[RMDB]
RNA sequence: GGGAACGACUCGAGUAGAGUCGAAAAGAUAUGGACUCCGAGACCGCAGAUACUACCCACCACUCUCGGAAACGAGAGUGAGGUGUAGGUCGAGGAGUCCUAAGUCAAACUGUAGUUCGCUACAGAACCUAUUCGUGAGGUUCGCCUCACGAAUAGGAAAAGAAACAACAACAACAAC
Reactivity to DMS in 0.01 (KOAc 150mM, MgCl2 10mM, bicine 150mM(pH8.5), 24C), signal-to-noise 2, nucleotides 027 to 126: g000a030u000a280u030g020g000a010c000u010c000c000g000a300g000a010c000c000g030c240a160g010a300u000a050c070u000a080c040c040c030a110c100c000a000c000u000c000u000c010g000g000a060a000a110c000g010a000g000a030g020u000g010a010g000g010u010g000u000a070g010g010u000c000g030a300g000g000a020g000u000c000c000u000a020a030g010u000c010a060a110a110c030u000g000u000a020g010u000u010c210g000c010u020a010c010a010g020a120a250
Reactivity to 2A3 in 0.01 (KOAc 150mM, MgCl2 10mM, bicine 150mM(pH8.5), 24C), signal-to-noise 1, nucleotides 027 to 126: g030a000u040a030u100g020g000a010c000u000c000c000g020a000g000a010c000c000g030c120a060g070a210u240a300c120u120a060c100c020c070a040c040c000a010c020u020c000u020c010g010g010a020a000a010c000g000a010g000a000g030u010g030a090g020g000u050g040u150a090g000g030u010c010g010a000g000g010a010g000u010c000c000u000a000a000g000u000c010a000a030a090c010u020g020u000a010g000u060u040c300g000c160u000a030c000a020g020a030a040

Background:
This 177-nucleotide RNA was probed chemically with DMS and 2A3. The reactions ran in a buffer of 150 mM KOAc, 10 mM MgCl2 and 150 mM bicine (pH 8.5), at 24 C. In probing experiments dimethyl sulfate is read out at A N1 and C N3, which are open when not base-paired. For 2A3, 2,592 sequencing reads were counted. High 2A3 reactivity points to a flexible backbone, as in loops and unpaired stretches. Source: RMDB library TTRDEL, as collected in RNAgym. The DMS profile rests on 1,279 reads.